Structure probing data (DMS) for a 177-nucleotide construct. The RNA was probed in 150 mM KOAc, 10 mM MgCl2 and 150 mM bicine (pH 8.5) at 24 C. It was measured as part of the RMDB library OK2TST. DMS adducts were read by reverse transcription with MarathonRT.

RNA sequence: GGGAACGACUCGAGUAGAGUCGAAAAUGAUUACAGGCUCGUCUGAAACAACCAAGAAUGAAUUGAAAGCGGGAUGAUACAGGGCAGGAGGAGCAGCGGCCUGGGCUGCAGGGGAAACAACCAAGAAAAGAGAGGUCUUAUUCGUAAGACCUCUCUUAAAAGAAACAACAACAACAAC
Reactivity to DMS in 0.01 (KOAc 150mM, MgCl2 10mM, bicine 150mM(pH8.5), 24C), signal-to-noise 1, nucleotides 027 to 126: u010g000a090u010u000a230c060a110g010g000c030u000c110g000u010c060u000g020a120a100a130c120a050a080c100c060a030a020g000a140a090u000g000a020a070u000u000g010a050a010a070g020c090g010g000g010a040u020g020a110u020a090c120a070g050g000g000c060a030g000g000a070g000g020a090g020c050a040g050c010g010g040c010c010u000g020g040g060c010u000g040c070a100g000g000g040g010a080a090a020c120a000a060c040c060a030a090g010a040a080